Structure probing data (DMS) for a 177-nucleotide construct.
[RMDB]
RNA sequence: GGGAACGACUCGAGUAGAGUCGAAAAAUGAUUCGUAGUGUAAGACGAUCGACAGUCAUCGCUUGCCAGCAGGACCACCAAUGGAAUACGCUUCGGUAACUACUCGAGAUCCCAAGCGAUAAAACAAACUAACGGUCUAAUUCGUUAGACCGUUAGUAAAAGAAACAACAACAACAAC
Reactivity to DMS in 0.01 (KOAc 150mM, MgCl2 10mM, bicine 150mM(pH8.5), 24C), signal-to-noise 3, nucleotides 027 to 126: a050u010g000a050u000u000c020g010u000a120g020u000g020u000a070a100g010a060c010g000a040u000c050g000a110c160a090g000u000c060a080u000c050g000c050u020u010g020c010c030a090g040c050a080g010g010a090c030c030a020c030c070a040a090u000g010g000a070a060u000a080c080g010c120u000u000c040g000g010u000a100a110c020u000a010c010u000c000g000a020g010a120u000c010c000c010a080a090g000c120g010a110u020a050a040a060a080c210a030a060
Conditions: 150 mM KOAc, 10 mM MgCl2 and 150 mM bicine (pH 8.5), 24 C.